[RMDB]
RNA sequence: GGGAACGACUCGAGUAGAGUCGAAAAUUGAAGGUAAAACAGCCUGUGGGUGAAACACACCCACAGGGCCCAUUGGGCGUUAGCACUCUGGUAUCACGGUACCUUUGUGCGCCUGUUUUACCGAAGGAUAGGGCUCAGUUCGCUGAGCCCAAAAGAAACAACAACAACAAC
Reactivity to DMS in 0.01 (KOAc 150mM, MgCl2 10mM, bicine 150mM(pH8.5), 24C), signal-to-noise 3, nucleotides 027 to 129: u050u040g050a200a080g040g000u060a000a000a000a000c030a000g000c030c010u000g030u030g030g010g050u020g020a110a170a150c230a160c050a050c000c000c040a010c050a040g000g000g050c000c010c010a000u040u090g020g040g060c010g000u120u050a120g020c000a010c000u040c060u010g050g030u000a000u020c000a030c270g080g000u000a000c000c020u020u020u050g030u030g000c000g050c020c010u000g070u030u000u000u020a020c000c040g030a000a030g010g020a040u040a090